[RMDB]
RNA sequence: GGGAACGACUCGAGUAGAGUCGAAAACAACGCCGCCGCCGGCUCGGUCGCCGAUCUGCUGUCGCAGGCUCGCGCGCCGUUGGCGAAGGUGGUUCGCGAGACCGAUCGGGUGGCCGGCAUCGCGGCCGGCCGACUAAAGAUUCGUCUUUAGUCGGCCAAAAGAAACAACAACAACAAC
Reactivity to 2A3 in 0.01 (KOAc 150mM, MgCl2 10mM, bicine 150mM(pH8.5), 24C), signal-to-noise 9, nucleotides 027 to 126: c010a020a050c060g010c010c010g010c010c020g010c010c000g060g000c090u100c060g080g050u060c050g030c150c010g020a030u010c010u060g030c030u130g150u300c160g000c050a020g010g010c010u010c020g050c000g000c020g000c010c010g090u040u110g220g030c110g020a040a020g040g040u050g000g020u030u020c010g000c020g020a030g040a210c030c050g010a030u040c030g040g080g060u080g040g010c010c000g000g010c010a010u080c030g000c010g020g000c020c020
Reactivity to DMS in 0.01 (KOAc 150mM, MgCl2 10mM, bicine 150mM(pH8.5), 24C), signal-to-noise 8, nucleotides 027 to 126: c050a120a130c200g010c010c020g030c010c270g010c010c030g000g010c050u000c060g020g010u000c050g010c050c020g000a040u000c010u000g010c040u010g010u010c130g010c030a200g000g010c020u000c070g010c080g020c100g020c000c010g010u000u010g010g010c080g010a060a140g010g020u000g010g020u000u000c000g010c040g010a040g010a160c080c020g010a040u000c030g000g010g020u010g010g010c030c010g010g010c030a030u000c170g010c010g010g010c030c200